[RMDB]
RNA sequence: GGGAACGACUCGAGUAGAGUCGAAAACCAGAUGACGGUCCUGCCAUGAGACCGCAACGAGAGCAUGUCGCAUCGAAUGGACUCGGGGAGUCGGCAACUUGCCCCACGGAUGAGCGCCUAAUGCCGGAAGAGACGUGCAACUUCGGUUGCACGUCAAGAAAAUGCGGAGAUUCGUCUCCGCAUUUUCAAAAGAAACAACAACAACAAC
Reactivity to 2A3 in 0.01 (KOAc 150mM, MgCl2 10mM, bicine 150mM(pH8.5), 24C), signal-to-noise 2, nucleotides 027 to 156: c000c000a020g100a160u110g040a040c000g000g000u010c010c000u040g110c040c010a100u100g050a080g020a160c010c010g020c040a060a000c030g080a020g000a010g120c010a030u170g040u090c070g000c040a060u070c070g020a040a080u090g010g010a010c040u050c090g010g000g010g000a060g030u090c030g000g010c000a030a060c030u040u100g100c000c000c000c000a040c050g040g010a100u140g050a010g060c040g000c030c030u110a140a070u130g020c000c020g000g050a070a000g090a020g000a040c000g000u010g000c010a000a010c000u040u050c210g090g000u010u000g000c000a000c000g010u000c000a000a000
Reactivity to DMS in 0.01 (KOAc 150mM, MgCl2 10mM, bicine 150mM(pH8.5), 24C), signal-to-noise 1, nucleotides 027 to 156: c000c020a180g010a050u000g010a080c130g020g020u000c010c010u030g010c080c140a110u000g000a100g030a030c040c080g020c010a070a110c050g010a170g000a090g000c010a100u000g020u010c000g050c020a080u000c060g020a120a300u020g020g000a070c020u000c020g010g020g060g000a180g030u000c010g060g030c010a060a060c020u010u000g000c000c020c010c000a160c050g010g000a160u020g010a060g000c020g120c040c000u000a010a080u020g020c000c050g060g020a140a150g000a210g000a030c010g060u020g010c000a000a030c000u000u000c150g050g020u000u000g000c020a050c000g000u000c000a030a030